The record gives the reactivity of an RNA of 207 nucleotides to 2A3. The RNA was probed in 150 mM KOAc, 10 mM MgCl2 and 150 mM bicine (pH 8.5) at 24 C. For 2A3, 1,769 sequencing reads were counted. The data come from the RNA Mapping Database (RMDB), library RNAMAK.
RNA sequence: GGGAACGACUCGAGUAGAGUCGAAAAUCCUAAGUCAUCUGACAUGUGGGUUCUACAGCUUUGAUCGUAGGUCGGAAACGACCUACGGGAGCUGUACUACCCACAACAGCAGAUGAUAUGGAAAAGCUCCGAUCAUGCUUCGGCAUGAUCGGAGCAAGGUAAACAGCAAGUUCGCUUGCUGUUUACCAAAAGAAACAACAACAACAAC
Reactivity to 2A3 in 0.01 (KOAc 150mM, MgCl2 10mM, bicine 150mM(pH8.5), 24C), signal-to-noise 2, nucleotides 027 to 156: u020c000c000u020a100a010g020u010c000a010u010c000u100g050a300c030a070u060g010u000g000g010g000u030u000c000u010a000c000a000g000c020u090u160u150g100a140u270c010g000u010a000g010g010u020c010g000g000a080a090a090c020g010a010c000c000u000a000c000g000g000g000a000g000c000u010g000u000a000c000u020a000c000c040c010a000c000a000a000c000a000g010c000a000g000a000u010g000a000u000a060u050g050g040a030a130a020a080g000c010u000c020c000g010a020u010c010a010u010g020c030u130u060c270g120g020c000a000u010g000a000u010c030g020g000a030g000c000a000a020